[RMDB]
RNA sequence: GGGAACGACUCGAGUAGAGUCGAAAAGUACAAUGUUUCGACAUUGUACGAUGGAGCCAAAGCCGAAAGGCAUUUUAAUGCUUGGCUGGCGAAAGCCUAAAAGAAGAAUCCAUUUCGAUGGAUUCAAGUAUUAUAGUAGAUUCGUCUACUAUAAUACAAAAGAAACAACAACAACAAC
Reactivity to DMS in 0.01 (KOAc 150mM, MgCl2 10mM, bicine 150mM(pH8.5), 24C), signal-to-noise 8, nucleotides 027 to 126: g010u000a000c000a000a000u000g010u000u000u010c170g030a070c000a000u000u000g010u000a000c000g000a100u010g000g010a300g010c000c010a030a130a200g010c010c010g010a110a150a070g000g010c000a010u000u010u000u010a090a040u000g010c000u000u000g010g010c050u010g000g010c000g000a120a130a120g000c000c010u000a040a050a080a100g010a150a120g000a010a010u000c000c000a010u000u000u010c170g010a010u000g000g000a010u000u000c000a040a120
Reactivity to 2A3 in 0.01 (KOAc 150mM, MgCl2 10mM, bicine 150mM(pH8.5), 24C), signal-to-noise 6, nucleotides 027 to 126: g000u000a000c000a010a010u000g010u010u070u100c110g020a010c000a010u000u000g000u000a000c010g000a030u050g070g040a030g000c020c000a130a110a030g000c010c010g140a180a070a030g040g000c010a020u010u040u020u110a180a020u010g000c010u040u080g000g000c010u000g010g000c020g020a040a010a010g010c010c010u080a100a080a010a030g180a090a020g000a000a010u000c000c000a000u020u070u150c230g070a020u010g000g000a000u000u000c000a010a010
Source information:
Chemical mapping of a 177-nucleotide RNA with DMS and 2A3. Values are in units of 0.01, from 0 to 300, in steps of 10. Values cover nucleotides 27 to 126. Source: RMDB library M2PK50, as collected in RNAgym. For DMS, 11,056 sequencing reads were counted. Conditions: 150 mM KOAc, 10 mM MgCl2 and 150 mM bicine (pH 8.5), 24 C. For 2A3 the reverse transcriptase was SuperScript II with manganese. For DMS the reverse transcriptase was MarathonRT.